[RMDB]
RNA sequence: GGGAACGACUCGAGUAGAGUCGAAAAGGCGUCUUCGCUGCCUCGGCCGCCUUGCACUGACCGGUAGCCGCCGUAAUAGCGGCAUUGUUCCCAUAAAAGGAUGUGGGUGUGGGUGUCGAAGUAGCAGCGCGUAAUAUUAGUUCGCUAAUAUUACGCGAAAAGAAACAACAACAACAAC
Reactivity to DMS in 0.01 (KOAc 150mM, MgCl2 10mM, bicine 150mM(pH8.5), 24C), signal-to-noise 9, nucleotides 027 to 126: g010g010c080g010u000c070u010u010c140g020c010u000g010c010c030u000c030g010g000c030c050g020c010c010u000u000g030c030a040c030u010g010a090c030c050g010g010u010a120g010c000c010g010c000c050g020u010a130a090u020a110g000c010g020g010c010a070u010u010g010u000u000c000c000c000a130u010a050a070a120a130g000g010a100u010g020u000g000g010g020u000g020u000g010g000g020u000g020u000c020g000a030a040g020u000a040g030c030a160g010
Reactivity to 2A3 in 0.01 (KOAc 150mM, MgCl2 10mM, bicine 150mM(pH8.5), 24C), signal-to-noise 9, nucleotides 027 to 126: g080g020c070g070u040c070u140u090c080g010c010u010g020c000c000u010c010g020g000c010c040g040c020c010u040u170g020c010a010c020u080g110a060c020c020g020g020u050a040g000c000c010g010c010c000g030u040a060a030u110a140g000c000g010g000c000a000u010u160g010u030u020c010c000c000a020u150a010a130a010a010g110g030a080u130g030u140g190g000g000u030g010u020g020g040g000u040g010u010c010g000a030a010g000u030a010g000c020a020g040